[RMDB]
RNA sequence: GGGAACGACUCGAGUAGAGUCGAAAACAGCGCAUGCAUCAGGCGGCUCAACGAUUCGUAAGAAGCAACGAGGAGCUUCUUCCUCUUCAGACACGCGUGGAACGCACACCGACAUGUCUGCCUAUACUAGCAUGCCAUCAUUCGUGAUGGCAUGCUAAAAAGAAACAACAACAACAAC
Reactivity to 2A3 in 0.01 (KOAc 150mM, MgCl2 10mM, bicine 150mM(pH8.5), 24C), signal-to-noise 3, nucleotides 027 to 126: c000a000g040c050g000c030a030u110g020c010a040u050c010a030g120g000c020g040g000c000u020c020a020a100c050g120a080u070u150c040g010u040a000a040g030a030a060g040c030a010a190c120g080a050g040g030a040g020c010u120u020c000u020u050c060c010u070c000u130u120c020a020g000a010c030a000c180g050c010g050u060g000g060a130a010c070g020c070a090c000a000c030c020g060a080c050a050u070g070u050c010u030g030c030c010u110a110u110a180c100
Reactivity to DMS in 0.01 (KOAc 150mM, MgCl2 10mM, bicine 150mM(pH8.5), 24C), signal-to-noise 1, nucleotides 027 to 126: c080a100g000c160g080c110a010u000g000c020a140u030c040a070g030g020c020g000g010c030u000c000a090a080c020g000a040u000u020c110g050u000a060a080g010a070a030g000c130a010a130c160g000a180g000g020a030g000c020u000u030c100u080u000c020c000u000c020u010u000c050a150g000a020c090a000c010g020c040g030u000g020g050a170a100c080g000c150a030c000a020c040c000g020a030c000a000u040g000u000c000u000g040c000c000u000a180u080a020c090
Record summary: The data come from the RNA Mapping Database (RMDB), library OK1LIB. This 177-nucleotide RNA was probed chemically with 2A3 and DMS. DMS (dimethyl sulfate) methylates the pairing face of unpaired adenines and cytosines. The reactions ran in a buffer of 150 mM KOAc, 10 mM MgCl2 and 150 mM bicine (pH 8.5), at 24 C.